Structure probing data (DMS and 2A3) for a 207-nucleotide construct. For DMS the reverse transcriptase was MarathonRT. For 2A3, 389 sequencing reads were counted.
[RMDB]
RNA sequence: GGGAACGACUCGAGUAGAGUCGAAAAAUAAUUAAGUGAGAAAAACAAGAUAAAAGUAUGCAUAAUACAAUGCCACUUGUAUAAAACAAACAAUGGCAAAAUCUUUGUAUGACUCUGUUUGCACUCACCCAUGUUUACAGAGGAUUGUAUGAGUGUAACCGUAUUUUACUUUCGAGUAAAAUACGGUAAAAGAAACAACAACAACAAC
Reactivity to DMS in 0.01 (KOAc 150mM, MgCl2 10mM, bicine 150mM(pH8.5), 24C), signal-to-noise 1, nucleotides 027 to 156: a240u010a050a150u030u000a090a120g030u040g030a130g040a050a110a100a100a150c000a030a050g020a210u000a050a100a030a250g000u000a060u000g010c140a080u000a090a090u000a030c010a090a260u000g020c030c000a000c110u030u010g010u010a090u000a090a070a090a100c090a100a060a120c020a000a100u000g060g040c010a090a030a170a070u000c040u000u050u000g030u000a070u000g000a040c030u000c010u020g030u010u000u000g040c000a030c090u010c040a110c010c130c090a160u000g000u000u000u000a130c040a040g010a020g040g000a170u010u000g000u000a030u000g000a110g030u040g020u000a060
Reactivity to 2A3 in 0.01 (KOAc 150mM, MgCl2 10mM, bicine 150mM(pH8.5), 24C), signal-to-noise 1, nucleotides 027 to 156: a000u150a040a100u250u040a260a080g050u030g060a130g020a160a110a080a000a000c010a000a030g000a030u110a060a120a020a020g000u020a000u040g020c000a000u060a300a030u040a140c000a010a010u010g010c000c010a010c040u000u000g010u030a230u110a190a080a020a000c060a040a000a000c000a020a020u080g000g000c010a000a000a000a200u060c100u040u230u180g070u030a110u090g030a050c000u000c010u000g000u010u030u030g030c010a000c030u020c080a010c000c020c000a000u030g000u000u010u010a010c010a000g070a010g070g100a040u070u120g060u100a030u140g100a020g190u270g200u300a040
The data come from the RNA Mapping Database (RMDB), library OK3TST.